[RMDB]
RNA sequence: GGGAACGACUCGAGUAGAGUCGAAAAUUGACCAAAACAUCGAGUAACUGCUCGAUCUUAACGGAAAACAACGACAUCCAAACGGACUUCUUUAUCAGUAAGAACCAGCACGACUUCUUUGGUAAGACGUAUCCGUCGGGUUCGCCCGACGGAUACGAAAAGAAACAACAACAACAAC
Reactivity to 2A3 in 0.01 (KOAc 150mM, MgCl2 10mM, bicine 150mM(pH8.5), 24C), signal-to-noise 1, nucleotides 027 to 126: u090u000g080a040c000c030a000a110a000a000c010a020u040c010g020a000g060u080a210a300c060u300g000c000u000c000g000a000u010c000u040u110a070a010c050g020g050a000a000a060a060c040a040a060c000g040a010c010a060u040c010c000a030a020a020c120g020g010a010c040u020u050c000u070u070u010a060u070c040a050g060u040a070a020g000a030a020c030c000a070g000c130a030c050g100a090c030u030u000c010u020u180u070g010g000u120a030a020g020a010